[RMDB]
RNA sequence: GGGAACGACUCGAGUAGAGUCGAAAACUUUGCAGAAAAGAACAUUUUCUUCAUUUCAUUCUAUGGGAGGUUAAUUUAGAGAGAUGCGCAAGUCAUAUAUUUUGCCUUCCUCUGUUCUUUGUGAAUGUUUUUUAAGGUAAAAUAGAGAUCAUAUUGCACAUCCAGAGUAAUUCGUUACUCUGGAUGUAAAAGAAACAACAACAACAAC
Reactivity to DMS in 0.01 (KOAc 150mM, MgCl2 10mM, bicine 150mM(pH8.5), 24C), signal-to-noise 2, nucleotides 027 to 156: c030u010u000u000g000c060a160g000a120a040a070a020g000a070a040c040a070u000u000u010u000c050u000u000c040a050u000u030u000c020a120u010u000c050u010a060u000g010g020g030a030g030g020u000u000a030a050u000u010u010a120g000a150g030a120g000a050u000g010c080g040c110a080a130g010u000c050a020u000a160u000a030u000u000u000u000g010c000c010u000u000c060c040u000c100u010g000u000u000c010u010u020u000g020u030g000a070a060u000g020u020u000u000u000u000u040a040a100g020g010u000a030a040a030a090u000a050g000a160g010a080u000c070a120u000a120u000u010g000c070
Reactivity to 2A3 in 0.01 (KOAc 150mM, MgCl2 10mM, bicine 150mM(pH8.5), 24C), signal-to-noise 3, nucleotides 027 to 156: c020u060u070u110g010c060a020g050a110a090a040a000g050a100a020c050a040u080u070u020u010c020u130u060c030a110u050u130u190c040a050u110u050c060u250a090u090g050g010g010a030g020g000u060u150a080a050u090u220u220a080g010a000g000a010g020a040u060g010c080g010c140a010a010g060u140c100a040u180a040u040a040u250u110u030u010g010c000c000u000u000c000c000u000c020u020g030u030u010c000u040u150u090g070u000g020a020a040u030g000u050u000u010u030u070u180a050a010g030g000u050a030a040a040a100u120a070g040a000g020a040u060c020a040u110a060u250u180g020c060